[RMDB]
RNA sequence: GGGAACGACUCGAGUAGAGUCGAAAAUGGUGUCGUUGACAGCGCCCAACGCUUCACAACCUGAAAGAAGCGCCUGUUAUCAGGACGGUUGAUCCAUUUACCGGUGCAGACCUCUGCAAACACCGGGUUUAACAAGCAUCUUUCGAGAUGCUUGUAAUACAUUCUUCACCUUCGGGUGAAGAAUGUAAAAAGAAACAACAACAACAAC
Reactivity to DMS in 0.01 (KOAc 150mM, MgCl2 10mM, bicine 150mM(pH8.5), 24C), signal-to-noise 1, nucleotides 027 to 156: u000g010g000u000g010u010c020g050u000u000g030a060c090a090g000c050g020c040c130c010a050a080c020g000c040u000u000c040a100c090a040a240c070c110u020g000a130a180a170g000a080a060g010c010g000c000c050u020g030u010u000a100u000c080a070g010g020a060c050g040g050u010u000g010a190u000c030c010a120u000u000u000a080c030c000g050g000u000g010c010a060g010a200c120c110u000c110u020g070c080a210a170a020c010a000c020c010g020g000g010u010u000u000a040a060c010a000a010g020c000a020u000c010u000u000u010c250g000a070g000a010u000g010c010u000u000g000u000a020a110
Reactivity to 2A3 in 0.01 (KOAc 150mM, MgCl2 10mM, bicine 150mM(pH8.5), 24C), signal-to-noise 2, nucleotides 027 to 156: u090g010g000u020g050u160c060g130u120u110g040a030c040a070g040c010g000c010c000c000a040a010c000g020c000u070u000c020a040c020a080a030c020c020u060g010a050a040a000g010a030a010g000c020g050c010c000u180g030u220u180a120u300c010a010g010g000a010c040g000g000u010u010g020a130u070c040c010a040u070u130u090a090c000c000g000g020u010g020c000a020g050a210c030c130u180c040u090g060c090a050a090a080c040a040c010c000g000g000g000u040u130u090a050a000c010a000a000g000c000a000u030c000u000u070u190c230g070a040g000a020u000g000c000u020u000g010u000a000a000
This 207-nucleotide RNA was probed chemically with DMS and 2A3. The reactions ran in a buffer of 150 mM KOAc, 10 mM MgCl2 and 150 mM bicine (pH 8.5), at 24 C. The data come from the RNA Mapping Database (RMDB), library M2RFPK. For DMS, 2,004 sequencing reads were counted.